Notes: Chemical mapping of a 177-nucleotide RNA with DMS. The RNA was probed in 150 mM KOAc, 10 mM MgCl2 and 150 mM bicine (pH 8.5) at 24 C. DMS adducts were read by reverse transcription with MarathonRT. The data come from the RNA Mapping Database (RMDB), library TTRINS.

RNA sequence: GGGAACGACUCGAGUAGAGUCGAAAAGAUAUGGACCCGUAACUUCGCAUCGAUCUAUACUCCCUUAUAUGGUCGGAAACGACCAUAUACCGUUGUAUAGGGAGCGAAGGAGAAGGGUCCUAAGUCAGUUACCACUUGUGUUCGCACAAGUGGUAACAAAAGAAACAACAACAACAAC
Reactivity to DMS in 0.01 (KOAc 150mM, MgCl2 10mM, bicine 150mM(pH8.5), 24C), signal-to-noise 1, nucleotides 027 to 126: g010a000u010a110u010g000g000a010c020c000c000g000u000a130a300c010u010u000c010g030c040a300u010c120g010a020u040c020u000a000u000a010c000u000c070c010c210u010u000a010u030a000u000g000g010u000c010g070g000a040a020a030c020g020a010c010c000a000u010a000u000a000c300c210g010u000u000g000u000a020u000a000g000g010g000a000g020c010g010a040a010g010g010a130g010a120a190g020g010g020u020c000c000u000a000a050g000u010c020a080
Record summary:
The DMS profile rests on 1,169 reads.